Source information:
An RNA of 207 nucleotides, treated with 2A3 and read out base by base.
[RMDB]
RNA sequence: GGGAACGACUCGAGUAGAGUCGAAAACGGCAAAAAAGCAAACUUGACCACCAAGGAUAAAAGAGAUCUUAUCCAAGGAUGCAUAAGAUAAUCUCACUUUUGACACCCACUGAUCUCGAACUUAAAGAAAACCGAGACUACUUCGGUAGUCUCGGAACGUAAAGCAAGGCUUCGGCCUUGCUUUACGAAAAGAAACAACAACAACAAC
Reactivity to 2A3 in 0.01 (KOAc 150mM, MgCl2 10mM, bicine 150mM(pH8.5), 24C), signal-to-noise 1, nucleotides 027 to 156: c000g050g000c050a050a000a050a000a050a040g140c090a130a130a010c050u050u060g040a110c010c000a000c030c050a060a060g010g010a000u040a100a080a010a020g010a000g030a010u000c010u000u080a030u010c020c010a010a000g050g010a030u040g000c010a060u050a070a080g010a050u100a130a100u140c080u010c080a100c040u100u060u000u040g090a030c000a040c020c010c010a060c100u050g050a040u030c030u000c010g030a070a060c010u180u300a060a000a150g160a050a040a050a020c010c010g000a000g000a000c000u010a000c010u010u070c120g050g030u010a010g010u000c000u000c010g000g000a000a000
2A3 adducts were read by reverse transcription with SuperScript II with manganese. Conditions: 150 mM KOAc, 10 mM MgCl2 and 150 mM bicine (pH 8.5), 24 C. The data come from the RNA Mapping Database (RMDB), library M2RFPK.